[RMDB]
RNA sequence: GGGAACGACUCGAGUAGAGUCGAAAACAUCAAGGAAAACUACAUCGACAAGGGCAAAUUGGGCACCGCGACCGGCGAGGGCUUUUACAAGUACCCCAAUCCGGCCUUCGAGAGCGCCGACUUCCUGCUGUUGCAGAUUGUUCGCAAUCUGCAACAGAAAAGAAACAACAACAACAAC
Reactivity to 2A3 in 0.01 (KOAc 150mM, MgCl2 10mM, bicine 150mM(pH8.5), 24C), signal-to-noise 1, nucleotides 027 to 126: c030a050u160c070a100a060g070g010a090a050a040a070c030u100a040c030a120u030c050g060a070c060a060a040g070g030g020c040a070a050a100u170u110g090g010g000c040a050c040c020g000c010g070a090c010c010g000g010c020g000a060g000g030g000c050u090u020u020u100a090c110a080a050g050u130a130c000c000c000c000a000a000u060c030c000g050g000c030c000u070u030c020g070a110g010a020g000c020g010c000c020g040a030c030u030u030c090c000u040g060
Reactivity to DMS in 0.01 (KOAc 150mM, MgCl2 10mM, bicine 150mM(pH8.5), 24C), signal-to-noise 2, nucleotides 027 to 126: c090a080u000c080a030a120g000g010a030a060a100a060c110u000a050c130a090u010c030g050a190c140a060a030g000g020g020c090a020a090a070u030u000g000g010g010c070a090c030c040g020c280g000a020c050c030g000g000c120g000a090g010g000g050c030u000u000u010u010a090c220a020a040g020u000a080c120c020c000c050a060a180u020c060c040g020g010c020c020u000u000c060g010a110g000a090g050c060g020c010c030g010a040c090u000u000c030c040u000g030